[RMDB]
RNA sequence: GGGAACGACUCGAGUAGAGUCGAAAAUGUGUUGAAACAAUAAGUAUUUAUUGAAACAUAUGAGACAUUAUACUGUCUCUUUUCCAGUAUUGGAUUCUAUACUGCACUUAGUUUUUCAACAUGAAGUACAGAAAACGCCGUAAAUUCUGCAGAACUACUAUAAAUCGUGGUUCGCCACGAUUUAUAGAAAAGAAACAACAACAACAAC
Reactivity to DMS in 0.01 (KOAc 150mM, MgCl2 10mM, bicine 150mM(pH8.5), 24C), signal-to-noise 1, nucleotides 027 to 156: u000g000u000g000u000u010g000a070a050a130c060a010a090u000a010a020g010u000a130u000u000u000a020u010u010g010a060a060a060c020a120u020a090u000g030a030g030a040c000a020u000u000a170u000a140c300u010g000u010c000u000c010u000u000u010u000c050c010a050g020u010a060u000u010g010g000a160u010u000c010u000a050u000a020c050u010g000c060a030c010u010u000a020g010u000u000u000u000u000c010a040a050c010a060u000g010a100a120g000u000a020c010a030g010a030a040a050a160c140g040c090c030g030u000a050a060a180u000u040c010u010g000c050a140g010a080a120c080u000a090
Reactivity to 2A3 in 0.01 (KOAc 150mM, MgCl2 10mM, bicine 150mM(pH8.5), 24C), signal-to-noise 1, nucleotides 027 to 156: u190g010u010g010u000u000g000a010a000a020c030a050a060u050a060a000g020u020a100u210u140u050a130u110u050g010a030a030a030c050a020u200a130u190g000a010g010a000c010a010u120u160a070u260a250c130u020g000u000c000u000c000u050u000u000u000c040c000a000g020u030a130u060u090g020g030a030u070u000c020u030a030u000a060c030u020g060c100a030c030u020u040a020g050u140u000u020u080u000c010a010a000c000a010u040g030a090a030g050u060a050c010a010g040a060a080a030a020c120g080c040c010g000u020a020a060a150u080u030c030u070g000c030a020g020a180a040c040u090a010